An RNA of 177 nucleotides, treated with 2A3 and read out base by base.

[RMDB]
RNA sequence: GGGAACGACUCGAGUAGAGUCGAAAAGGCUCAGGAAACUGAGCCAAGAAUGUGCAGAGAAAAGAACUAGUGACUGCACAGAACAGAAUAAAAGUACACUAGAAAAUAGGAGCAGGAAACUGCUCCAGGAUACGGUCCAUUUCGAUGGACCGUAUCCAAAAGAAACAACAACAACAAC
Reactivity to 2A3 in 0.01 (KOAc 150mM, MgCl2 10mM, bicine 150mM(pH8.5), 24C), signal-to-noise 2, nucleotides 027 to 126: g000g000c010u000c000a010g050g000a150a130a110c000u000g000a000g000c000c000a000a000g030a030a120u030g000u000g000c010a000g080a000g110a120a000a130a050g100a100a120c000u000a000g000u000g000a070c000u000g000c010a000c010a010g000a020a060c020a020g110a090a050u190a180a050a000a010g140u200a020c000a000c020u050a040g120a040a090a090a020u300a090g000g000a000g000c000a000g090g000a010a100a040c000u000g000c000u000c000c000a000